Chemical mapping of a 177-nucleotide RNA with 2A3 and DMS.
Reactivities are given for positions 27 through 126.
For 2A3, 8,131 sequencing reads were counted.
Source: RMDB library OK1LIB, as collected in RNAgym.
2A3 adducts were read by reverse transcription with SuperScript II with manganese.
For DMS, 5,702 sequencing reads were counted.
The reactions ran in a buffer of 150 mM KOAc, 10 mM MgCl2 and 150 mM bicine (pH 8.5), at 24 C.
DMS adducts were read by reverse transcription with MarathonRT.
RNA sequence: GGGAACGACUCGAGUAGAGUCGAAAAGGCUACACAUGCGCGGCGAAAAUAGGUAGCAAGAAUCCGUUUUGGUGUGGCGGAUUUAAUUUGCCAUUGUCCAUCUGCUUAGGCACGUCGCGCAUGGAAAGGGAUAGAUUAACUUCGGUUAAUCUAUCCCAAAAGAAACAACAACAACAAC
Reactivity to 2A3 in 0.01 (KOAc 150mM, MgCl2 10mM, bicine 150mM(pH8.5), 24C), signal-to-noise 7, nucleotides 027 to 126: g080g030c030u070a010c050a000c000a050u000g000c010g000c000g000g000c000g080a050a030a040a030u190a060g070g040u020a020g010c020a020a050g060a020a040u010c020c020g010u010u020u070u120g180g000u120g020u070g030g000c000g000g000a000u040u030u030a150a210u020u040u060g020c020c010a050u030u090g060u030c050c020a110u070c090u130g020c040u100u100a040g030g020c030a000c010g000u010c000g000c010g000c000a000u000g000g000a010a050a030
Reactivity to DMS in 0.01 (KOAc 150mM, MgCl2 10mM, bicine 150mM(pH8.5), 24C), signal-to-noise 3, nucleotides 027 to 126: g000g000c030u010a060c020a180c000a000u010g000c000g010c000g000g010c000g000a060a030a140a130u020a050g000g000u000a040g010c080a070a060g000a040a020u010c000c010g000u030u010u060u020g040g030u010g030u010g000g000c000g020g010a030u000u000u010a050a120u020u000u020g010c040c030a110u040u010g010u030c040c050a120u010c100u000g000c050u000u030a130g000g000c200a140c000g020u010c010g000c020g000c000a000u000g000g000a070a130a090